An RNA of 207 nucleotides, treated with 2A3 and DMS and read out base by base.

RNA sequence: GGGAACGACUCGAGUAGAGUCGAAAACGCAGCCCCGUCCUACGGGAGCCCCAGUCUGAGCGAGGUGCAGCCCCAUCCUCAGGGAGCCCCAGUCUGAGGGGAGACGCAGUCCCGUCCUCAGGGAACCGCAGUCUGAGGGAGAUGCAGCCCCGUCCUAAAAUACCUACUGAUUCGUCAGUAGGUAUUUAAAAGAAACAACAACAACAAC
Reactivity to 2A3 in 0.01 (KOAc 150mM, MgCl2 10mM, bicine 150mM(pH8.5), 24C), signal-to-noise 1, nucleotides 027 to 156: c150g000c030a020g020c000c000c000c010g040u060c020c050u150a020c020g000g000g060a070g000c020c020c000c020a060g100u050c070u090g080a050g000c030g020a040g050g030u040g010c000a110g190c010c000c000c030a040u110c000c000u020c050a050g000g030g020a020g070c000c000c000c010a060g100u040c000u050g070a040g000g050g030g000a100g000a020c090g000c070a030g010u010c000c000c010g050u140c020c130u070c070a020g030g000g060a040a030c010c000g060c020a100g000u000c000u010g030a130g040g000g000a030g000a020u010g010c000a080g000c000c000c000c000g040u050c000c000u080a030
Reactivity to DMS in 0.01 (KOAc 150mM, MgCl2 10mM, bicine 150mM(pH8.5), 24C), signal-to-noise 1, nucleotides 027 to 156: c080g020c060a160g000c040c010c000c010g040u010c080c000u000a080c040g000g020g020a150g040c010c020c010c000a210g050u000c100u000g000a060g020c060g030a060g020g040u000g000c000a130g000c020c010c020c030a190u000c020c020u000c000a080g030g000g000a240g020c000c010c020c000a250g000u000c020u000g020a110g000g020g040g000a040g020a090c060g000c050a060g010u000c010c010c010g000u010c040c140u010c060a110g000g000g030a020a100c010c000g020c010a120g000u000c020u000g000a070g030g000g010a080g000a140u000g000c040a130g030c010c020c010c010g000u020c030c010u010a140